[RMDB]
RNA sequence: GGGAACGACUCGAGUAGAGUCGAAAAUGAUGUGCGUCUAUGACUGCGAAGCGGUCUGUGUGGUAACCGGCCUAUCCACAUGAUAGGUUUGUGCUAUGAGGCCGGAAAUAGCACGUGCACAUCUAAAGGGUACGUCGUGCUUCGGUACGACGUACCCAAAAGAAACAACAACAACAAC
Reactivity to 2A3 in 0.01 (KOAc 150mM, MgCl2 10mM, bicine 150mM(pH8.5), 24C), signal-to-noise 2, nucleotides 027 to 126: u140g000a010u000g000u000g020c020g000u020c030u080a030u070g000a020c000u050g010c050g160a180a050g010c020g000g010u000c020u020g110u000g000u010g000g080u040a300a110c000c000g010g030c010c000u060a020u080c060c000a030c010a010u160g120a060u150a050g160g000u050u040u030g000u000g020c000u000a020u130g090a010g070g000c010c000g020g000a040a100a050u050a000g040c010a000c010g000u040g000c000a010c010a000u000c030u000a050a040a040
Reactivity to DMS in 0.01 (KOAc 150mM, MgCl2 10mM, bicine 150mM(pH8.5), 24C), signal-to-noise 2, nucleotides 027 to 126: u000g000a010u000g010u000g000c050g030u040c080u020a060u000g000a000c010u000g000c060g000a070a140g010c070g010g010u000c000u000g020u010g010u000g040g010u000a040a170c030c020g000g020c000c000u010a090u050c300c220a000c060a110u010g030a140u040a150g000g030u000u070u000g030u000g000c160u000a030u000g010a060g000g040c040c000g040g020a020a000a030u040a170g000c010a000c000g000u030g000c010a030c010a000u000c000u000a020a080a160